Conditions: 150 mM KOAc, 10 mM MgCl2 and 150 mM bicine (pH 8.5), 24 C. An RNA of 177 nucleotides, treated with DMS and 2A3 and read out base by base. For 2A3, 569 sequencing reads were counted. Reactivities are given for positions 27 through 126. DMS adducts were read by reverse transcription with MarathonRT.
[RMDB]
RNA sequence: GGGAACGACUCGAGUAGAGUCGAAAACGCGAGGACUGUGAAAACGGGGAGGCUGUGAGUAACAACGAUAACCUCCCCCGGUGAUUCGAUGGAGCGCCGCAAGGCGAGCCGAUGAAUUGCCGAGAAGUGAAUUCGGAGAGUUCGCUCUCCGAAUUCAAAAAGAAACAACAACAACAAC
Reactivity to DMS in 0.01 (KOAc 150mM, MgCl2 10mM, bicine 150mM(pH8.5), 24C), signal-to-noise 1, nucleotides 027 to 126: c120g010c130g070a150g050g000a090c090u010g000u010g030a080a020a100a150c180g030g020g000g000a030g000g070c170u020g000u000g020a300g000u030a170a020c300a160a070c010g000a240u010a030a180c000c000u010c000c000c000c040c000g020g000u000g000a000u000u000c000g000a120u040g000g020a050g040c000g000c000c000g000c290a080a100g040g000c000g050a000g000c000c040g000a120u050g000a030a000u000u000g000c000c010g000a030g050a030a070g010
Reactivity to 2A3 in 0.01 (KOAc 150mM, MgCl2 10mM, bicine 150mM(pH8.5), 24C), signal-to-noise 1, nucleotides 027 to 126: c050g110c050g000a030g060g150a140c140u120g020u020g090a020a050a050a000c100g000g020g060g000a010g000g000c030u010g090u030g180a040g190u100a010a010c060a050a000c060g040a040u070a020a010c000c010u050c000c000c000c000c000g030g000u000g000a000u010u000c040g040a060u280g010g010a000g000c000g000c000c000g010c010a040a000g000g000c000g010a010g000c000c000g020a050u080g000a000a000u000u000g000c020c040g040a040g010a040a040g120